[RMDB]
RNA sequence: GGGAACGACUCGAGUAGAGUCGAAAACAUUGAUAUCGCUAAGCCAAAAGUGAAAAUGACAGCAUUUAAAUUUGAUAAUCAUAAAAUUGUUACAGAGCUAACGUUAAAUGAAUUUAUGAUUGGCGAAACGCCAGUGACUGUUCGCAGUCACUGGCGUAAAAGAAACAACAACAACAAC
Reactivity to 2A3 in 0.01 (KOAc 150mM, MgCl2 10mM, bicine 150mM(pH8.5), 24C), signal-to-noise 1, nucleotides 027 to 126: c000a000u170u140g060a060u150a050u220c020g250c000u000a030a030g200c000c170a000a040a000a000g000u040g020a130a000a060a130u130g000a060c080a120g120c000a110u230u200u000a190a120a070u110u090u100g060a250u000a150a000u060c000a170u000a000a180a000a180u010u010g000u000u000a000c000a020g080a000g210c070u040a060a060c000g000u000u190a040a040a040u120g120a060a230u000u050u000a000u000g000a000u000u080g000g000c150g000a080a080
The record gives the reactivity of an RNA of 177 nucleotides to 2A3.
Reactivities are given for positions 27 through 126.
Source: RMDB library OK1LIB, as collected in RNAgym.
The RNA was probed in 150 mM KOAc, 10 mM MgCl2 and 150 mM bicine (pH 8.5) at 24 C.